[RMDB]
Conditions: 150 mM KOAc, 10 mM MgCl2 and 150 mM bicine (pH 8.5), 24 C. Chemical mapping of a 177-nucleotide RNA with DMS and 2A3. DMS adducts were read by reverse transcription with MarathonRT. It was measured as part of the RMDB libraries RFM100 and RFMREP.
RNA sequence: GGGAACGACUCGAGUAGAGUCGAAAAUGGCCAAAAAAGCAGUGUGAGGUCACUUGGCUCAAGCCAAGUGAGGGCGUUUUUCCAGCUUGCUGGCACCCCUGAUUAUUCAGGAAGGUGAUCCCCAUUAGCGGAAAUAACAUUUCGAUGUUAUUUCCGCAAAAGAAACAACAACAACAAC
Reactivity to DMS in 0.01 (KOAc 150mM, MgCl2 10mM, bicine 150mM(pH8.5), 24C), signal-to-noise 3, nucleotides 027 to 126: u030g020g010c020c010a000a020a090a060a050a090g030c000a120g010u010g010u010g010a180g020g010u000c000a000c000u000u000g000g000c010u050c280a120a150g000c020c000a020a000g000u010g010a010g010g000g000c070g000u010u020u000u010u010c030c000a090g000c040u010u020g000c090u000g000g010c010a020c020c030c000c000u000g000a020u040u030a120u020u020c010a010g000g010a100a030g040g010u010g000a090u020c020c010c000c070a120u040u020a120
Reactivity to 2A3 in 0.01 (KOAc 150mM, MgCl2 10mM, bicine 150mM(pH8.5), 24C), signal-to-noise 4, nucleotides 027 to 126: u040g050g030c010c020a060a050a000a000a020a020g060c050a050g030u040g040u050g160a100g070g030u000c000a000c000u000u010g010g000c020u090c300a180a080g000c000c000a000a000g010u000g000a020g010g000g010c040g000u030u000u010u050u040c010c000a000g000c010u010u160g020c000u000g010g010c000a010c000c000c010c000u010g010a040u040u300a140u290u110c000a000g040g000a150a090g030g000u020g010a060u050c000c000c000c020a100u090u150a010